An RNA of 170 nucleotides, treated with 2A3 and DMS and read out base by base. Conditions: 150 mM KOAc, 10 mM MgCl2 and 150 mM bicine (pH 8.5), 24 C. The 2A3 profile rests on 7,029 reads. It was measured as part of the RMDB library 15KLIB. For DMS the reverse transcriptase was MarathonRT. For 2A3 the reverse transcriptase was SuperScript II with manganese.

RNA sequence: GGGAACGACUCGAGUAGAGUCGAAAACUACAACAGAACCACUCAAACUUUUUGCUGCUGAGACUUUACGUGCCACUGAAGAGGCGUCUAAGCAGUCUUAUGCUAUUGCCACCAUCAAAGAAAUUGUCAAUCUCACCGUUCGCGGUGAGAAAAAGAAACAACAACAACAAC
Reactivity to 2A3 in 0.01 (KOAc 150mM, MgCl2 10mM, bicine 150mM(pH8.5), 24C), signal-to-noise 5, nucleotides 027 to 129: c000u020a010c010a000a000c010a050g050a010a020c000c030a020c020u090c080a080a120a200c100u050u050u060u070u070g020c050u010g000c020u040g000a010g010a110c010u090u040u080a080c150g040u100g020c000c000a020c010u140g130a060a010g120a070g090g000c000g030u010c000u050a020a010g010c000a000g000u010c000u030u050a090u030g000c010u040a030u080u110g000c000c010a040c000c000a010u030c020a040a010a070g070a030a100a050u080u080g030u000c010a050a040
Reactivity to DMS in 0.01 (KOAc 150mM, MgCl2 10mM, bicine 150mM(pH8.5), 24C), signal-to-noise 3, nucleotides 027 to 129: c020u030a020c090a010a100c030a030g000a000a000c040c040a050c040u010c060a080a170a130c060u010u010u010u030u060g000c010u040g040c040u040g020a130g000a060c070u000u000u000a080c190g010u100g020c050c070a050c100u070g150a120a050g000a120g050g010c020g000u000c070u040a110a020g000c000a060g010u050c090u060u040a030u060g010c080u010a070u090u000g020c000c070a040c060c040a040u000c050a010a020a010g030a050a090a070u040u020g040u030c090a070a050